[RMDB]
RNA sequence: GGGAACGACUCGAGUAGAGUCGAAAAGCAAAAGAUUAUCCAGCUGUAGCGGUGAAAUUCGUAGAGAUCUGGUGGAUAAUGAACCGGUGGCGAAGGCGAAAGAUAACCGCUGAAAAGAAGAAUUGAACACCCAAUAAGCUUUCGAGCUUAUUGGGUGAAAAGAAACAACAACAACAAC
Reactivity to DMS in 0.01 (KOAc 150mM, MgCl2 10mM, bicine 150mM(pH8.5), 24C), signal-to-noise 1, nucleotides 027 to 126: g010c110a070a040a050a160g000a090u000u000a050u000c030c040a130g000c050u000g010u000a050g000c000g000g030u010g000a040a110a050u000u000c010g000u020a210g020a150g000a100u020c000u000g010g040u020g050g000a150u000a060a050u010g000a110a070c030c000g030g080u000g010g010c280g020a080a230g000g000c010g000a050a010a040g010a050u000a200a050c020c000g010c040u000g000a050a050a070a070g000a040a050g000a050a080u000u000g010a080a130